RNA sequence: GGGAACGACUCGAGUAGAGUCGAAAAGGCGAGCCGUGUUUAGCUUGGGAUCACGUAACAAACUGAGCAAUAAAUACAAACGCAAACGAUAAUUAUUCACUAGCUGCAGCGUAAUAGCACAGCUCGUUUCUCCUAGGCUUCCCACAGUCUAGACAGACUCUACGUUGUACUUCGGUACAACGUAGAGAAAAGAAACAACAACAACAAC
Reactivity to DMS in 0.01 (KOAc 150mM, MgCl2 10mM, bicine 150mM(pH8.5), 24C), signal-to-noise 1, nucleotides 027 to 156: g010g000c010g000a110g080c000c050g020u010g000u000u000u010a060g000c010u000u000g020g000g010a120u000c110a140c110g070u000a110a100c000a110a080a040c040u000g000a070g090c050a050a120u020a040a090a160u010a060c040a100a110a130c060g000c060a060a110a080c150g010a090u020a080a080u000u000a160u000u020c000a140c080u000a140g010c050u000g000c040a080g000c050g010u000a110a070u010a170g000c000a020c010a040g020c000u000c000g000u000u000u010c000u000c000c000u080a080g000g000c000u000u000c020c010c010a230c180a100g040u000c040u000a010g030a110c030a050g000a090
Reactivity to 2A3 in 0.01 (KOAc 150mM, MgCl2 10mM, bicine 150mM(pH8.5), 24C), signal-to-noise 5, nucleotides 027 to 156: g080g010c010g000a010g010c020c020g000u000g000u020u080u050a020g020c020u020u010g010g020g020a060u180c080a050c150g140u180a170a060c070a100a070a030c040u020g000a020g030c030a020a120u140a110a060a000u160a080c130a050a170a010c050g000c060a060a140a040c070g030a040u090a180a090u190u170a110u190u180c090a040c160u100a060g040c040u030g020c080a050g010c010g050u040a090a030u080a100g010c010a000c000a030g000c000u000c000g000u000u050u000c030u010c000c010u020a000g000g010c000u060u050c050c030c010a050c120a010g000u000c000u000a000g010a020c010a000g030a030